[RMDB]
RNA sequence: GGGAACGACUCGAGUAGAGUCGAAAAGUAGUGCUCGAGAGGGAGGCUGUCUCGCAGAGCUUUUAGAUCUUGUGAUCUUUCCCUCCUCCAUAUCGCUUAUGCGUCAAGCGAUAGACGCAUAAUUAAAGCAUGUGUCAAGAUUCGUCUUGACACAUGCAAAAGAAACAACAACAACAAC
Reactivity to DMS in 0.01 (KOAc 150mM, MgCl2 10mM, bicine 150mM(pH8.5), 24C), signal-to-noise 1, nucleotides 027 to 126: g020u000a060g030u000g010c080u000c040g020a080g060a280g010g010g000a060g010g040c120u020g010u000c020u000c030g040c150a070g000a170g000c000u000u000u020u000a020g000a020u000c010u020u000g000u010g010a000u000c000u000u000u000c000c000c000u010c020c010u000c010c040a120u000a060u000c070g000c250u000u000a000u000g000c000g000u000c000a090a120g020c240g000a070u000a060g010a010c000g000c000a000u000a020a030u000u010a030a070a110
Reactivity to 2A3 in 0.01 (KOAc 150mM, MgCl2 10mM, bicine 150mM(pH8.5), 24C), signal-to-noise 1, nucleotides 027 to 126: g000u080a020g090u030g170c010u050c090g070a020g000a020g040g080g030a030g190g070c070u090g090u130c000u000c000g040c010a000g000a010g070c000u000u040u040u020a000g000a000u020c050u120u300g250u270g100a010u010c000u010u010u000c000c000c000u010c000c000u000c000c000a020u050a060u090c050g040c010u000u000a000u020g020c000g000u000c020a040a060g080c040g220a100u050a100g030a020c000g000c010a000u000a000a020u100u130a080a060a020
Structure probing data (DMS and 2A3) for a 177-nucleotide construct. The 2A3 profile rests on 1,293 reads.